Background: An RNA of 207 nucleotides, treated with 2A3 and read out base by base. 2A3 is a SHAPE reagent: it acylates the 2'-hydroxyl of flexible nucleotides of all four kinds.

RNA sequence: GGGAACGACUCGAGUAGAGUCGAAAAUUCGGUCCUUUGGAGCGGACCGUUUGCUCCGUCAGGAUGUGGAGGUGUCGCGCCCUCCUGUGCGCGUAUGUACAUCGAUACGGUUAUGUCGCCUUUGUGUCGGCGUUUGACACUUACACAUACCGGAUAAGACUCGAGCAUUAUUCGUAAUGCUCGAGUCAAAAGAAACAACAACAACAAC
Reactivity to 2A3 in 0.01 (KOAc 150mM, MgCl2 10mM, bicine 150mM(pH8.5), 24C), signal-to-noise 1, nucleotides 027 to 156: u030u020c050g010g010u020c050c020u140u100u170g170g000a110g110c080g000g000a030c000c080g000u000u000u070g000c050u070c100c000g030u020c100a000g040g000a050u000g000u020g000g040a030g110g000u000g000u020c000g000c000g000c000c000c000u000c000c030u000g030u020g000c010g040c010g000u100a000u000g130u000a030c040a220u090c190g110a180u000a080c120g030g090u080u050a020u070g170u200c050g000c080c030u030u150u240g120u110g000u030c030g000g030c000g020u010u080u190g000a000c020a000c010u000u050a000c020a000c000a000u080a300c000c000g000g000a020u040a110a020
Source: RMDB library OK3TST, as collected in RNAgym.